[RMDB]
RNA sequence: GGGAACGACUCGAGUAGAGUCGAAAAGAUAUGGACCGGCAAGCUAGAUCGCCAUCGGAAACGAUGGUCGAUCUUGGACCUUGCGGUCCUAAGUCAAAAGGGAUGAACCGUUCGCGGUUCAUCCCAACGAUAAUUUACGCUUCGGCGUAAAUUAUCGAAAAGAAACAACAACAACAAC
Reactivity to 2A3 in 0.01 (KOAc 150mM, MgCl2 10mM, bicine 150mM(pH8.5), 24C), signal-to-noise 1, nucleotides 027 to 126: g010a000u030a010u060g010g000a010c040c060g270g240c020a000a000g000c010u030a000g000a020u010c010g030c000c000a000u020c010g000g000a020a000a020c000g010a010u020g000g050u070c050g000a000u010c000u000u140g020g020a000c000c000u000u030g020c000g010g020u000c000c010u010a010a000g020u000c010a010a020a090a260g000g000g000a010u000g000a000a010c000c000g030u100u100c300g000c020g100g000u000u010c000a010u000c020c000c000a000a000
Reactivity to DMS in 0.01 (KOAc 150mM, MgCl2 10mM, bicine 150mM(pH8.5), 24C), signal-to-noise 3, nucleotides 027 to 126: g000a020u000a080u010g010g000a010c000c000g040g020c000a010a010g000c020u000a010g030a010u000c010g000c030c010a000u000c000g000g000a020a030a060c000g000a010u000g000g000u020c080g000a000u000c000u010u000g030g020a040c300c000u000u000g020c010g000g000u000c000c000u000a000a060g000u000c010a080a070a170a150g000g010g010a020u000g000a010a000c000c000g030u000u010c300g030c020g020g000u000u000c000a000u000c010c000c020a000a000
Source: RMDB library TTRDES, as collected in RNAgym.
Chemical mapping of a 177-nucleotide RNA with 2A3 and DMS.
For DMS the reverse transcriptase was MarathonRT.
The DMS profile rests on 3,183 reads.